[RMDB]
RNA sequence: GGGAACGACUCGAGUAGAGUCGAAAAGAUAUGGAUCCUGUGGAGACAUGAAGGACCAUCGGAAACGAUGGUACUUCAACAGCUCCCAGGAUCCUAAGUCAAAGGAGAACGGUUCGCCGUUCUCCAAGUAUCACUCUUACUUCGGUAAGAGUGAUACAAAAGAAACAACAACAACAAC
Reactivity to DMS in 0.01 (KOAc 150mM, MgCl2 10mM, bicine 150mM(pH8.5), 24C), signal-to-noise 4, nucleotides 027 to 126: g000a010u000a030u000g000g000a010u000c000c000u000g020u030g020g010a020g000a030c160a130u030g010a030a000g000g000a010c000c000a010u000c000g020g000a020a020a030c000g020a010u000g010g000u000a000c000u000u000c010a090a090c210a170g010c000u000c000c000c020a010g000g010a000u000c000c000u000a000a040g000u010c000a100a190a140g010g000a010g000a010a010c000g010g000u000u020c300g030c010c000g010u000u000c000u000c000c000a010a050
Reactivity to 2A3 in 0.01 (KOAc 150mM, MgCl2 10mM, bicine 150mM(pH8.5), 24C), signal-to-noise 3, nucleotides 027 to 126: g020a010u020a000u040g000g000a000u010c010c020u070g180u300g100g010a010g010a020c270a300u300g000a020a020g000g020a000c000c000a000u000c000g000g000a010a010a000c000g000a000u010g010g000u000a010c000u000u000c000a040a050c100a040g010c000u000c000c000c000a010g000g000a000u000c000c000u010a010a000g000u000c020a040a080a160g000g000a010g000a010a000c020g000g070u100u160c300g040c120c010g000u000u010c000u000c000c000a000a000
The data come from the RNA Mapping Database (RMDB), library TTRDES. Structure probing data (DMS and 2A3) for a 177-nucleotide construct.